[RMDB]
RNA sequence: GGGAACGACUCGAGUAGAGUCGAAAAGAUAUGGACCGUACGCGAGCAACAGCUCGGACUCGGAAACGAGUUUCGAGACAUGCUCACGGUCCUAAGUCAAAGUGGGGACCCUUCGGGGUCCCCACAACAUUGAGAAACGGUUCGCCGUUUCUCAAUGAAAAGAAACAACAACAACAAC
Reactivity to DMS in 0.01 (KOAc 150mM, MgCl2 10mM, bicine 150mM(pH8.5), 24C), signal-to-noise 2, nucleotides 027 to 126: g010a010u000a070u000g010g000a010c000c010g000u000a070c210g050c300g000a000g000c020a130a210c070a160g040c000u000c010g010g000a000c000u000c000g010g000a010a020a040c000g000a000g010u000u000u010c010g000a000g000a010c030a100u000g010c000u000c010a020c000g000g000u000c000c000u000a000a070g000u000c010a070a110a160g010u000g030g000g020g010a020c020c000c000u010u020c230g020g030g010g000u000c000c000c000c000a000c000a010a090

Chemical mapping of a 177-nucleotide RNA with DMS. Source: RMDB library TTRDEL, as collected in RNAgym. For DMS the reverse transcriptase was MarathonRT. The reactions ran in a buffer of 150 mM KOAc, 10 mM MgCl2 and 150 mM bicine (pH 8.5), at 24 C.